[RMDB]
Chemical mapping of a 207-nucleotide RNA with 2A3 and DMS. For DMS, 4,418 sequencing reads were counted. The RNA was probed in 150 mM KOAc, 10 mM MgCl2 and 150 mM bicine (pH 8.5) at 24 C. DMS adducts were read by reverse transcription with MarathonRT.
RNA sequence: GGGAACGACUCGAGUAGAGUCGAAAAGGGGUCGUCAAGACAAGUCUCGUAUUGUCAGCUCCCAGACAGCUGAAGCCUCCACGGCUGUGUGGGAGCUUGGAUUUAUACGAGUCACCCUUGACGACGGAGGCACCCAAAAGUAAGCUUCGGCUUACAACUAAAUUGUAUCGUUCGCGAUACAAUUUAGAAAAGAAACAACAACAACAAC
Reactivity to 2A3 in 0.01 (KOAc 150mM, MgCl2 10mM, bicine 150mM(pH8.5), 24C), signal-to-noise 3, nucleotides 027 to 156: g090g010g020g010u000c010g000u000c000a000a000g020a040c070a140a020g010u000c000u020c010g010u010a010u010u050g090u090c160a070g010c000u010c010c010c010a030g070a070c000a010g000c000u020g000a070a010g030c010c000u010c000c010a050c020g010g000c010u000g010u000g030u000g010g000g000a000g000c000u010u060g000g000a000u020u080u050a010u000a010c010g010a000g040u070c050a040c000c000c000u000u000g000a000c000g000a000c000g000g010a000g000g000c010a040c000c020c000a040a150a010a020g000u010a000a000g000c000u030u170c300g070g000c000u020u010a000c000a000a000
Reactivity to DMS in 0.01 (KOAc 150mM, MgCl2 10mM, bicine 150mM(pH8.5), 24C), signal-to-noise 2, nucleotides 027 to 156: g000g020g010g020u010c020g020u000c010a040a050g000a050c090a120a090g000u020c000u000c010g020u000a030u010u010g020u000c030a070g000c000u000c000c020c070a080g010a030c010a010g040c020u010g030a090a110g020c010c010u010c010c020a300c040g010g030c000u000g030u010g000u000g010g020g010a020g010c010u000u000g020g010a070u000u020u000a020u010a010c030g010a040g000u000c030a070c050c020c000u000u000g000a040c000g020a040c010g030g000a030g010g030c020a180c020c000c010a090a070a090a230g000u000a030a010g010c000u010u000c300g050g020c000u000u000a020c000a070a300